This 177-nucleotide RNA was probed chemically with DMS.
The data come from the RNA Mapping Database (RMDB), library TTRDEL.
[RMDB]
RNA sequence: GGGAACGACUCGAGUAGAGUCGAAAAGAUAUGGAUUUCCAGCAAGGCGUGGUCGGAAACGACCAAACGCUGAUGACCUGGGUCCUAAGUCAAAACAUAUUCCGGUGCUUCGGCACCGGAAUAUGAACUCUACAUGGAACUUCGGUUCCAUGUAGAGAAAAGAAACAACAACAACAAC
Reactivity to DMS in 0.01 (KOAc 150mM, MgCl2 10mM, bicine 150mM(pH8.5), 24C), signal-to-noise 1, nucleotides 027 to 126: g030a050u000a220u010g010g000a020u000u010u020c000c000a020g000c010a080a170g000g010c010g000u010g000g020u010c000g000g000a060a110a170c010g000a000c010c010a030a080a050c010g020c000u000g000a020u000g010a090c300c030u000g050g010g020u010c000c000u000a030a230g010u010c050a110a040a090a240c000a000u000a010u000u000c000c000g010g000u000g010c010u010u030c210g050g020c010a000c000c000g010g010a000a000u000a000u000g000a070a150